RNA sequence: GGGAACGACUCGAGUAGAGUCGAAAAUAUUUCGGAAGCGAUUGAUAAUCAAAUGGAAGAAGUUACAACGAGGCUCAAUACUCGCAGUGGCGACAGGGAAACAGCCUUGAUAGAGGAGUGUCAUACCCUACGGAGGAGGAUUCGUCCUCCUCCGUAGAAAAGAAACAACAACAACAAC
Reactivity to DMS in 0.01 (KOAc 150mM, MgCl2 10mM, bicine 150mM(pH8.5), 24C), signal-to-noise 4, nucleotides 027 to 126: u030a060u000u010u010c050g030g000a120a060g010c090g000a070u010u010g010a130u000a090a100u000c070a030a090a090u040g000g000a130a050g000a090a070g010u000u010a040c130a090a130c090g000a090g020g000c050u010c080a090a100u040a090c030u010c030g030c110a060g000u020g020g040c040g000a100c110a060g000g000g030a060a100a070c150a050g000c020c020u010u010g000a120u070a040g000a060g020g010a100g010u020g000u020c070a080u020a100c150c030
Reactivity to 2A3 in 0.01 (KOAc 150mM, MgCl2 10mM, bicine 150mM(pH8.5), 24C), signal-to-noise 4, nucleotides 027 to 126: u140a000u020u050u050c010g030g020a030a000g080c050g080a060u030u100g090a050u100a200a050u100c080a100a020a050u090g060g020a030a020g060a050a020g080u060u050a060c050a140a020c100g030a020g010g000c000u000c050a110a120u070a040c010u020c000g060c100a050g030u040g100g050c020g010a020c060a060g000g000g040a010a070a050c030a010g000c010c000u010u050g100a140u120a080g060a030g050g000a060g040u040g000u020c060a060u070a130c010c010